[RMDB]
RNA sequence: GGGAACGACUCGAGUAGAGUCGAAAACAAUGAUUCGUCAUUGAACAAGGCAGUCGUGGCCGAGCGGUUAAGGCGUCUGACUAGAAAUCAGAUUCCCUCUGGGAGCGUAGGUUCGAAUCCUACCGACUGCGCCAAGUUUUAUCAGUUCGCUGAUAAACACUUACUGGAUUUUCGAAUCCAGUAAGUGAAAAGAAACAACAACAACAAC
Reactivity to DMS in 0.01 (KOAc 150mM, MgCl2 10mM, bicine 150mM(pH8.5), 24C), signal-to-noise 4, nucleotides 027 to 156: c030a020a010u010g000a050u000u010c300g050u000c000a030u000u000g010a120a120c060a110a150g010g010c020a040g020u000c040g020u010g000g030c020c030g000a130g020c040g020g010u000u010a040a180g040g020c020g010u000c000u000g010a020c000u010a210g000a050a180a080u000c000a020g000a040u000u000c000c000c030u020c130u000g040g010g010a140g010c070g010u020a020g020g010u000u000c070g020a300a090u000c010c010u050a030c000c010g010a030c040u010g010c010g000c010c020a040a250g000u000u010u000u000a030u000c000a010g010u000u000c300g030c010u000g020a010u000a030a030a120
Reactivity to 2A3 in 0.01 (KOAc 150mM, MgCl2 10mM, bicine 150mM(pH8.5), 24C), signal-to-noise 6, nucleotides 027 to 156: c010a010a020u020g010a020u040u120c220g070u020c100a010u020u020g040a070a030c050a110a060g130g000c010a010g000u000c000g000u020g040g000c000c010g010a030g010c150g110g140u170u080a100a050g010g000c010g000u000c010u010g000a010c010u020a030g120a070a070a010u000c010a000g000a000u020u020c010c040c060u150c200u300g000g010g000a010g010c010g000u010a010g000g000u000u000c000g000a000a010u000c000c000u000a000c000c000g000a000c000u000g010c000g000c010c010a050a020g010u040u020u010u000a010u000c010a010g030u060u100c180g050c120u010g000a000u010a010a020a010